The record gives the reactivity of an RNA of 207 nucleotides to DMS. For DMS the reverse transcriptase was MarathonRT. Conditions: 150 mM KOAc, 10 mM MgCl2 and 150 mM bicine (pH 8.5), 24 C.

RNA sequence: GGGAACGACUCGAGUAGAGUCGAAAACGCACUCGCAGCUUAAUAACCUGCGCUGAGCCCUUAUCCCCCAGCUUGCCUGUGUCCUAGGGAAUUGGAAGGUCAUCCUUCACAGGAUCGUGUGGAAGUCAUUACUCGUGAGUGUUCGCACUCACGAGAAUCCCAACAAAGAGUUCGCUCUUUGUUGGGAAAAAGAAACAACAACAACAAC
Reactivity to DMS in 0.01 (KOAc 150mM, MgCl2 10mM, bicine 150mM(pH8.5), 24C), signal-to-noise 2, nucleotides 027 to 156: c090g030c030a130c030u000c030g040c030a040g030c030u010u000a160a180u010a120a120c280c000u000g010c010g050c100u000g000a100g020c030c030c030u010u010a180u000c010c000c030c020c040a130g020c020u010u000g020c050c000u010g010u000g000u000c040c030u010a110g030g030g020a050a120u010u000g020g000a080a110g020g030u000c060a180u000c010c040u000u000c060a080c020a060g000g020a110u010c080g000u020g020u000g020g000a050a180g000u010c040a110u020u000a160c000u010c010g040u010g010a060g040u000g010u010u010c300g030c020a020c000u000c020a000c010g000a020g010a020a060